[RMDB]
RNA sequence: GGGAACGACUCGAGUAGAGUCGAAAAGGUCACCAGGCCACAGCCCAAGGCAGAGCUGGCAGGGACCCUGCCCUAUGGGCCAUCGGAAAGACAGGCCUGAUGGGCAGCAUUUUCGGGGGUCUGAGCCCCAACUCGGCCAGAAUCACCCUCCCGGGCACCUACUGAUUUAGUUCGCUAAAUCAGUAGGAAAAGAAACAACAACAACAAC
Reactivity to 2A3 in 0.01 (KOAc 150mM, MgCl2 10mM, bicine 150mM(pH8.5), 24C), signal-to-noise 2, nucleotides 027 to 156: g050g010u030c040a050c300c050a090g120g000c000c000a040c030a060g000c000c000c030a080a020g030g000c060a070g030a010g080c020u010g000g000c000a040g040g000g050a060c000c000c020u030g010c030c000c000u040a160u280g000g000g000c000c000a030u000c000g050g180a220a110a030g030a040c070a140g000g000c000c000u030g020a040u090g000g010g000c000a010g000c000a040u050u080u140u160c100g030g000g000g000g030u050c120u110g070a060g050c000c010c010c020a050a110c060u060c040g010g000c010c000a000g030a060a100u060c020a050c030c000c000u010c010c010c010g000g030g000c000a000
Reactivity to DMS in 0.01 (KOAc 150mM, MgCl2 10mM, bicine 150mM(pH8.5), 24C), signal-to-noise 1, nucleotides 027 to 156: g000g010u010c050a210c000c120a140g000g050c040c000a130c060a090g040c000c000c000a130a080g020g050c100a100g010a150g000c040u010g080g000c010a100g000g010g050a050c050c060c020u010g020c010c010c010u030a120u000g000g170g010c010c010a040u010c010g010g020a210a170a230g000a030c080a250g060g030c000c000u010g000a190u010g000g020g030c000a100g000c090a080u020u000u000u000c080g010g000g010g040g040u000c020u000g000a300g010c000c000c010c010a010a010c010u010c130g010g030c000c010a030g000a090a020u000c020a020c030c030c000u000c010c000c100g000g000g040c070a130